Structure probing data (2A3 and DMS) for a 177-nucleotide construct. For DMS the reverse transcriptase was MarathonRT. Reactivities are given for positions 27 through 126. The 2A3 profile rests on 781 reads.
[RMDB]
RNA sequence: GGGAACGACUCGAGUAGAGUCGAAAAUCAUUGGAACAAUUGGAACACCGGCUUUUCAUCGCCAAAUAGCUGCACAUUUGGAAAAGAUGCCAUUGUGGCAAAAAGCAAUUUUGUGUGGAAUGGGACACCCUAACCGAAUGUUCGCAUUCGGUUAGGGAAAAGAAACAACAACAACAAC
Reactivity to 2A3 in 0.01 (KOAc 150mM, MgCl2 10mM, bicine 150mM(pH8.5), 24C), signal-to-noise 1, nucleotides 027 to 126: u070c010a020u000u120g100g040a010a060c000a050a190u060u100g020g010a100a000c020a010c210c000g050g000c050u030u000u170u110c030a080u130c000g000c010c000a060a000a000u140a030g050c090u080g000c010a000c020a070u000u000u080g000g030a090a110a030a060g070a060u030g000c000c000a050u090u090g110u100g140g000c030a020a020a020a020a020g000c060a010a010u060u100u110u090g020u010g010u000g010g100a000a070u100g000g030g010a010c000a040
Reactivity to DMS in 0.01 (KOAc 150mM, MgCl2 10mM, bicine 150mM(pH8.5), 24C), signal-to-noise 1, nucleotides 027 to 126: u000c050a090u010u010g000g020a170a140c090a040a090u000u020g020g010a080a080c080a080c050c060g000g000c000u020u000u010u010c080a060u010c110g000c060c010a040a090a020u010a080g000c000u000g020c080a020c070a040u010u000u020g010g030a070a080a070a100g000a220u000g020c000c000a080u000u000g000u000g060g000c040a040a010a020a040a060g000c100a030a060u000u000u000u000g000u020g020u000g000g000a050a020u010g000g000g030a150c150a060